[RMDB]
RNA sequence: GGGAACGACUCGAGUAGAGUCGAAAACAAGGGUAGUUCGCUACCCUUGAAAUUCUAGUCGCUAGAAAACGAUCAAAACUAGCGACUAGAAAUACGAUCGAAAAACUCAAUUCUUCGGAAUUGAGAAGUUUAUUACUGCGUUCGCGCAGUAAUAAACAAAAGAAACAACAACAACAAC
Reactivity to 2A3 in 0.01 (KOAc 150mM, MgCl2 10mM, bicine 150mM(pH8.5), 24C), signal-to-noise 1, nucleotides 027 to 126: c010a020a020g000g000g000u000a000g000u040u010c110g030c050u020a000c000c000c000u000u000g000a000a000a000u000u000c000u000a000g000u000c020g010c000u010a000g020a080a260a070a060c130g110a210u200c090a010a110a040a160c000u020a000g000c010g000a000c000u000a000g000a000a000a000u070a010c020g080a120u150c090g020a090a040a000a010a100c000u010c000a000a000u030u020c000u050u040c250g100g020a000a000u000u000g000a000g000a000a000
Reactivity to DMS in 0.01 (KOAc 150mM, MgCl2 10mM, bicine 150mM(pH8.5), 24C), signal-to-noise 1, nucleotides 027 to 126: c020a010a020g020g000g040u000a000g020u000u020c130g050c000u000a010c000c010c000u030u010g000a010a080a080u000u000c010u000a000g000u010c000g000c000u010a010g010a080a050a130a140c230g010a080u000c170a090a060a130a120c000u000a020g000c000g000a000c010u000a000g010a000a040a020u000a050c160g000a050u000c090g020a030a070a050a100a160c000u000c000a000a020u000u000c000u010u000c160g010g000a000a000u000u000g000a010g000a030a030
Overview:
An RNA of 177 nucleotides, treated with 2A3 and DMS and read out base by base. Values are in units of 0.01, from 0 to 300, in steps of 10. The data come from the RNA Mapping Database (RMDB), library M2PK50. For 2A3, 1,331 sequencing reads were counted. The reactions ran in a buffer of 150 mM KOAc, 10 mM MgCl2 and 150 mM bicine (pH 8.5), at 24 C. 2A3 is a SHAPE reagent: it acylates the 2'-hydroxyl of flexible nucleotides of all four kinds. Values cover nucleotides 27 to 126.